[RMDB]
RNA sequence: GGGAACGACUCGAGUAGAGUCGAAAAUUAAUGAAGCAAAUCUCCAAACUCCAACGAUGAGCGUUUCGCAAUCGCCGCUUAAGGCUUUUGCCGAGGCUGCUUGAGCCUUGUUACCAAAGAAAAGCCGAAAACCCAAAUGUCUUCGGACAUUUGGGAAGGUAUUAUUACUGUUCGCAGUAAUAAUACCAAAAGAAACAACAACAACAAC
Reactivity to DMS in 0.01 (KOAc 150mM, MgCl2 10mM, bicine 150mM(pH8.5), 24C), signal-to-noise 1, nucleotides 027 to 156: u010u000a020a170u000g020a080a130g020c040a080a140a070u010c030u030c020c010a140a150a030c030u000c030c000a080a150c060g010a120u010g000a080g040c000g020u000u000u010c030g020c040a050a090u000c060g040c040c030g020c210u020u020a060a150g010g000c010u020u020u020u000g000c030c050g000a100g050g050c010u000g020c110u050u010g030a110g040c040c020u020u000g000u000u000a080c050c060a100a110a080g010a140a020a020a070g000c000c020g000a050a020a080a160c000c010c010a010a020a020u010g010u000c010u000u010c300g050g010a030c000a010u000u000u000g030g030g010a000a000
Reactivity to 2A3 in 0.01 (KOAc 150mM, MgCl2 10mM, bicine 150mM(pH8.5), 24C), signal-to-noise 4, nucleotides 027 to 156: u140u090a050a100u140g080a080a010g020c040a060a060a170u050c050u020c050c040a170a090a060c030u030c030c050a110a060c060g100a120u190g030a020g030c040g020u020u060u110c020g000c020a010a020u030c030g010c020c000g090c100u200u210a110a080g000g000c000u000u040u010u020g020c020c010g010a000g010g000c040u080g010c020u060u030g010a010g000c000c000u000u010g040u090u140a060c030c010a050a040a000g040a010a050a020a000g040c030c020g060a060a050a050a070c010c000c000a000a000a000u000g000u000c000u000u040c180g100g000a000c000a000u000u000u000g010g000g000a000a000

Overview: An RNA of 207 nucleotides, treated with DMS and 2A3 and read out base by base. Conditions: 150 mM KOAc, 10 mM MgCl2 and 150 mM bicine (pH 8.5), 24 C. The 2A3 profile rests on 2,764 reads.